[RMDB]
RNA sequence: GGGAACGACUCGAGUAGAGUCGAAAACGGGGUUGGCUAUAGUUGAUUUCGAACCGUAUGCUUAUGUAUAUGGAAUGAUUUGUACGCUUUACGCAUGUGUACACUCACUCUCAGUUCACUCUUGUGAGAGAAGGGAGAGAGAGAUAUUUUGCGAUUAGGUUUCUUGGAUCUUCGGAUUCGGGAAAUCAAAAGAAACAACAACAACAAC
Reactivity to 2A3 in 0.01 (KOAc 150mM, MgCl2 10mM, bicine 150mM(pH8.5), 24C), signal-to-noise 1, nucleotides 027 to 156: c040g010g000g000g040u040u040g020g020c020u010a000u040a100g000u000u090g030a180u040u080u100c030g030a020a010c000c010g000u020a000u000g000c000u120u110a050u170g010u000a000u010a010u010g010g010a070a080u050g050a050u040u000u100g010u000a000c000g000c010u030u080u040a020c010g000c000a000u020g030u000g040u000a000c020a010c000u000c000a020c000u010c000u000c010a040g020u040u020c040a000c010u030c000u120u180g020u210g070a010g000a010g010a020a000g030g000g000a010g000a000g000a000g000a000g000a000u000a040u080u230u050u070g010c020g040a040u010u060a020
Reactivity to DMS in 0.01 (KOAc 150mM, MgCl2 10mM, bicine 150mM(pH8.5), 24C), signal-to-noise 1, nucleotides 027 to 156: c030g010g020g030g020u000u010g020g010c050u010a130u000a170g020u000u000g010a100u000u000u000c010g000a110a300c010c000g010u030a010u000g040c030u020u010a160u020g040u000a030u000a030u020g020g020a090a080u000g020a090u000u000u000g010u000a080c070g020c040u000u000u000a130c090g040c060a040u000g020u010g000u000a020c010a150c150u020c000a150c030u010c010u010c030a070g000u000u000c030a090c030u000c020u020u000g010u000g010a030g010a080g000a070a080g000g010g000a060g020a060g000a030g020a070g000a090u000a040u000u000u000u010g010c030g030a190u000u010a150

This 207-nucleotide RNA was probed chemically with 2A3 and DMS.
Conditions: 150 mM KOAc, 10 mM MgCl2 and 150 mM bicine (pH 8.5), 24 C.
2A3 adducts were read by reverse transcription with SuperScript II with manganese.
Values cover nucleotides 27 to 156.